[RMDB]
RNA sequence: GGGAACGACUCGAGUAGAGUCGAAAAGAUAUGGAUGGCGCGUACAUCGUGGUUCUUUUGACGAAGGUAUUUCGGAAACGAAAUAUACCUUCGAUAAGAACACACGAUGUACGCGCCAUCCUAAGUCCAUACGGUCAAUCUUCGGAUUGACCGUAUGAAAAGAAACAACAACAACAAC
Reactivity to DMS in 0.01 (KOAc 150mM, MgCl2 10mM, bicine 150mM(pH8.5), 24C), signal-to-noise 1, nucleotides 027 to 126: g000a080u000a300u000g020g000a010u000g000g010c010g080c000g000u000a000c000a000u000c010g140u030g000g010u020u000c000u000u000u020u000g000a240c300g010a000a000g020g010u000a010u000u010u000c010g000g000a140a090a220c020g000a000a040a060u010a110u000a070c020c000u000u000c000g000a030u000a010a010g000a010a000c000a110c000a000c000g040a010u000g030u000a000c000g010c000g020c000c000a000u000c000c000u000a010a090g000u000c030